[RMDB]
RNA sequence: GGGAACGACUCGAGUAGAGUCGAAAAGUAAAAGGCACAUCAACCAUGAUUCGCGGCAACGGUGAAGAAGUUGUGCGAUGGGUUAAGUCUGAAGUAGACCGCGAUCGCAUGAUUGCUUUGAUGGAGGCGGCGCAAGCGUCAUUUUGCGAAGACCUGCCGUGAGGUUGGAUUUCGAUCCAACCUCACGAAAAGAAACAACAACAACAAC
Reactivity to 2A3 in 0.01 (KOAc 150mM, MgCl2 10mM, bicine 150mM(pH8.5), 24C), signal-to-noise 1, nucleotides 027 to 156: g090u090a030a010a010a020g060g000c020a020c040a090u010c080a020a040c020c000a080u170g020a030u100u080c020g000c070g050g020c030a000a000c110g060g000u190g050a020a010g000a050a000g030u060u060g000u000g020c020g000a070u000g120g140g000u030u050a020a020g000u000c000u010g080a130a080g050u280a060g040a050c000c000g080c000g130a050u000c030g020c000a000u030g010a010u020u080g010c010u190u060u030g030a050u040g020g040a000g010g140c030g000g010c020g000c040a110a110g000c040g090u050c060a060u140u160u070u080g000c010g000a030a000g020a030c030c050u120g030c090